[RMDB]
RNA sequence: GGGAACGACUCGAGUAGAGUCGAAAACUUCCACCUGGAGUUGCGAGAAGAGACUAAUCAGGUUAGUCAUUGCUGGGUGCCCUGUCAUACGGCGUUUGCAAUGAUGAAAUUUAAAUAGUAUGAAUAUGAGCGUAGAUAUCCGAGGGGCAAUAUGCUUGGUGGUAAAUUACUUCGGUAAUUUACCACCAAAAGAAACAACAACAACAAC
Reactivity to 2A3 in 0.01 (KOAc 150mM, MgCl2 10mM, bicine 150mM(pH8.5), 24C), signal-to-noise 2, nucleotides 027 to 156: c020u090u000c000c020a020c010c000u020g040g000a010g030u030u060g100c090g070a080g030a140a070g060a070g100a080c040u110a100a070u070c010a010g010g000u020u020a020g000u020c020a010u010u010g000c010u010g020g170g220u170g010c010c000c000u000g000u020c000a000u000a010c000g000g000c000g000u080u100u030g000c000a000a010u000g000a000u030g000a020a000a020u200u300u140a000a000a000u000a000g000u000a000u020g000a020a040u060a100u100g020a040g000c010g000u050a030g040a170u090a090u110c050c030g050a070g030g040g020g000c050a070a100u120a090u140g020c020u030u000